[RMDB]
RNA sequence: GGGAACGACUCGAGUAGAGUCGAAAAAGUCCACAUCACCGGAACAUCAGCCACUUCUUGGGAGAACACGUAAUUCACCACGGAAAAGACCCAGAAAGCGUAUCUUUUCUUCACUGCUAUUAUGACCAUGGUGAGGCCUUCCUCCGGUGUGAGCUUGUGAAGCGACAUUAUUCGUAAUGUCGCUUCAAAAAGAAACAACAACAACAAC
Reactivity to 2A3 in 0.01 (KOAc 150mM, MgCl2 10mM, bicine 150mM(pH8.5), 24C), signal-to-noise 1, nucleotides 027 to 156: a000g060u000c020c000a070c010a050u090c000a000c000c020g030g010a040a030c030a150u170c070a040g030c010c030a030c010u050u050c040u110u060g050g020g010a110g050a140a000c070a010c110g030u070a000a000u070u090c000a010c120c010a030c030g000g000a000a030a050a010g010a100c020c020c020a040g180a080a080a010g150c110g000u070a020u040c030u020u040u010u010c010u070u030c090a060c020u040g030c010u010a020u050u030a030u150g050a100c030c010a010u020g000g000u010g030a040g020g030c000c000u030u030c010c010u010c000c000g000g000u010g010u000g000a020g010c080u160u170g000
Reactivity to DMS in 0.01 (KOAc 150mM, MgCl2 10mM, bicine 150mM(pH8.5), 24C), signal-to-noise 1, nucleotides 027 to 156: a060g020u000c010c030a070c060a040u020c040a070c010c010g000g040a100a080c060a070u010c120a100g000c010c030a080c050u000u010c010u000u000g030g000g010a140g030a090a130c130a110c080g000u000a070a130u020u010c030a040c020c050a080c180g000g010a050a090a040a090g000a070c070c080c020a110g000a090a060a040g020c040g020u010a110u010c010u000u000u000u000c040u000u000c050a080c080u000g040c060u000a130u000u030a050u010g010a090c040c030a080u030g000g040u000g010a110g030g010c060c110u000u000c040c020u000c040c010g000g080u000g030u000g010a070g040c030u010u010g030